[RMDB]
RNA sequence: GGGAACGACUCGAGUAGAGUCGAAAAUGCGGUUAACACACGUGUAUUAGUUAGUUGGUCAGCGCCAGCUGCAAUUACAACCAGUGCAUCAUAUAAUCAAUACACGCCACAGCACAUCGUGGCAUAUACAUUACAAUUACAUAUGUACGGCUAGUUACUGUGUUACACGGUUCGCCGUGUAACACAGAAAAGAAACAACAACAACAAC
Reactivity to 2A3 in 0.01 (KOAc 150mM, MgCl2 10mM, bicine 150mM(pH8.5), 24C), signal-to-noise 2, nucleotides 027 to 156: u070g000c040g010g090u060u100a040a020c140a010c020a010c100g040u110g000u020a030u010u010a020g120u050u090a020g000u000u030g050g030u130c120a010g040c070g030c070c040a030g000c000u020g000c020a010a010u070u050a170c070a090a020c080c000a030g010u020g030c000a030u020c130a010u100a020u050a160a050u140c080a000a030u040a070c010a000c150g060c000c000a040c020a010g120c140a080c000a210u070c090g000u010g000g000c000a010u010a000u000a070c010a060u130u150a070c140a080a040u120u070a030c040a060u110a020u090g000u020a040c030g030g010c030u070a160g040u080u060a100